[RMDB]
RNA sequence: GGGAACGACUCGAGUAGAGUCGAAAACUGUCGGAGCAACUGGCCCAACCUCGCCACGGGGAAGCACAGCGCAGUAUCCACGUUGACUCUGGACUCACAGUUUGGGCGCCUACGACUCCUCGUGCACCUCGUAGUGAUUGUUCGCAAUCACUACGAGAAAAGAAACAACAACAACAAC
Reactivity to DMS in 0.01 (KOAc 150mM, MgCl2 10mM, bicine 150mM(pH8.5), 24C), signal-to-noise 3, nucleotides 027 to 126: c060u000g000u000c070g010g000a110g010c040a070a060c100u010g000g020c050c020c020a130a130c050c080u000c050g060c090c070a060c050g010g010g000g000a060a060g060c060a060c300a080g000c070g010c030a120g020u010a080u000c010c000a040c160g000u000u000g000a140c040u000c010u000g010g000a060c110u000c100a060c040a060g010u010u000u000g030g000g020c000g020c030c000u040a070c090g000a300c000u010c000c020u000c040g000u010g000c100a140c150
Reactivity to 2A3 in 0.01 (KOAc 150mM, MgCl2 10mM, bicine 150mM(pH8.5), 24C), signal-to-noise 2, nucleotides 027 to 126: c020u020g060u090c040g070g000a060g000c020a000a130c070u080g070g000c000c000c000a050a110c010c030u050c090g080c090c010a020c030g000g010g010g020a040a040g000c030a020c020a020g020c000g000c020a020g070u080a080u050c020c010a060c130g030u050u120g050a160c080u020c020u050g080g020a060c030u050c090a170c020a040g050u090u170u120g060g010g000c000g000c000c000u080a050c060g020a040c010u020c020c000u010c000g040u000g000c010a040c040